[RMDB]
The data come from the RNA Mapping Database (RMDB), libraries RFM100 and RFMREP.
Structure probing data (DMS and 2A3) for a 177-nucleotide construct.
High 2A3 reactivity points to a flexible backbone, as in loops and unpaired stretches.
High DMS reactivity at an A or C suggests that its Watson-Crick edge is free.
The RNA was probed in 150 mM KOAc, 10 mM MgCl2 and 150 mM bicine (pH 8.5) at 24 C.
RNA sequence: GGGAACGACUCGAGUAGAGUCGAAAAGGUACUGGAUUUUUACCCAUGGUGAUUUCUACCACCUUACUACUGAUGAAGACACCAUUCCAGCGGACCACUGUGAUCCAAGAGGCAUUCAGCCAUCAUGUACUGCGGUACUUUUCGAAGUACCGCAGUAAAAAGAAACAACAACAACAAC
Reactivity to DMS in 0.01 (KOAc 150mM, MgCl2 10mM, bicine 150mM(pH8.5), 24C), signal-to-noise 3, nucleotides 027 to 126: g000g020u000a100c050u020g000g000a010u000u030u050u000u000a160c080c030c030a270u030g000g000u000g000a080u000u000u000c030u000a170c080c010a050c090c040u000u010a060c090u020a060c120u000g020a150u030g000a050a050g000a080c020a010c020c040a020u010u000c030c030a020g000c060g030g000a090c040c010a080c090u010g020u020g010a130u010c000c060a060a070g010a060g000g000c060a080u000u010c130a080g020c010c030a060u020c120a030u010g010
Reactivity to 2A3 in 0.01 (KOAc 150mM, MgCl2 10mM, bicine 150mM(pH8.5), 24C), signal-to-noise 4, nucleotides 027 to 126: g080g000u040a030c070u060g070g030a090u070u030u020u120u280a110c000c000c000a040u060g000g020u010g010a220u020u110u090c020u070a080c000c030a030c020c050u070u090a100c070u010a010c020u030g090a170u020g020a100a010g110a030c030a020c030c000a020u040u020c000c000a010g000c020g040g000a000c000c000a050c020u070g020u020g030a050u000c020c000a070a000g050a040g060g000c030a010u100u100c090a110g000c030c000a060u060c030a020u090g040